[RMDB]
RNA sequence: GGGAACGACUCGAGUAGAGUCGAAAAAUCAGUGGGCUUAGCCCAGACUUUUGGGAGAUAAAAUACCUCUCAGCCCCUCCACCUUGGGGUGCCCUAUUCGGAGCACUGCAGUUCCCGAUAGAAAGGCCGAAGACAUAAUGUUCGCAUUAUGUCUUCGAAAAGAAACAACAACAACAAC
Reactivity to 2A3 in 0.01 (KOAc 150mM, MgCl2 10mM, bicine 150mM(pH8.5), 24C), signal-to-noise 1, nucleotides 027 to 126: a000u100c090a080g180u080g030g010g000c110u150u230a060g000c000c000c020a020g050a150c080u140u040u090u040g000g040g000a030g020a020u180a110a300a030a000u140a160c000c000u000c010u010c020a010g070c000c010c000c000u010c030c000a130c020c020u050u020g070g040g010g000u050g000c030c000c000u100a230u020u130c090g000g000a060g000c040a000c080u200g070c010a000g000u000u000c000c020c000g000a030u020a040g080a030a110a000g050g000c080
Reactivity to DMS in 0.01 (KOAc 150mM, MgCl2 10mM, bicine 150mM(pH8.5), 24C), signal-to-noise 2, nucleotides 027 to 126: a070u000c060a090g020u000g010g010g020c010u010u000a140g000c000c010c020a060g000a070c120u000u000u000u000g030g000g000a050g010a020u000a080a050a160a180u010a100c140c000u000c000u020c020a020g030c030c010c000c010u000c040c020a110c100c080u000u000g010g020g010g030u000g020c010c010c000u000a220u000u000c190g030g000a070g010c010a020c030u000g020c040a130g000u000u010c010c000c000g010a170u010a090g000a070a070a070g010g020c190

The record gives the reactivity of an RNA of 177 nucleotides to 2A3 and DMS. It was measured as part of the RMDB library VIROID. The RNA was probed in 150 mM KOAc, 10 mM MgCl2 and 150 mM bicine (pH 8.5) at 24 C. The 2A3 profile rests on 1,094 reads.